[RMDB]
RNA sequence: GGGAACGACUCGAGUAGAGUCGAAAAACUCUGGGGAGAAAAGGGAGGAUCGGAUGGGAAGAGUAUAUCCUACGGGAAUCCCCCGGUCCCUCUCACGUCCAGCCCCUCCCCGUGUCUAGUGAAGGGAAUAGUGGGACCUUCGGGUCCCACAAAAGAAACAACAACAACAAC
Reactivity to DMS in 0.01 (KOAc 150mM, MgCl2 10mM, bicine 150mM(pH8.5), 24C), signal-to-noise 2, nucleotides 027 to 129: a000c080u000c020u000g020g010g080g000a060g000a050a100a210a180g000g040g000a060g090g000a040u040c050g000g030a120u000g020g020g060a000a120g000a120g030u000a120u060a140u240c000c000u050a060c070g030g080g010a120a080u000c000c040c060c020c000g000g000u050c020c060c050u000c020u000c150a000c200g000u030c010c070a100g050c120c120c080c000u030c000c000c000c000g000u040g000u050c100u040a130g020u100g000a050a040g000g000g040a010a020u000a100
Reactivity to 2A3 in 0.01 (KOAc 150mM, MgCl2 10mM, bicine 150mM(pH8.5), 24C), signal-to-noise 1, nucleotides 027 to 129: a000c070u090c000u060g000g000g010g000a040g050a020a090a100a000g000g030g000a020g020g000a030u010c000g010g010a070u260g050g000g000a060a000g110a000g190u100a080u000a010u200c050c060u050a060c140g020g000g040a000a150u000c040c000c020c000c000g070g000u140c040c000c000u000c000u000c000a030c000g060u010c000c030a080g000c000c000c000c000u010c030c000c000c000g010u000g050u020c020u020a090g000u060g110a020a000g040g010g000a000a020u010a030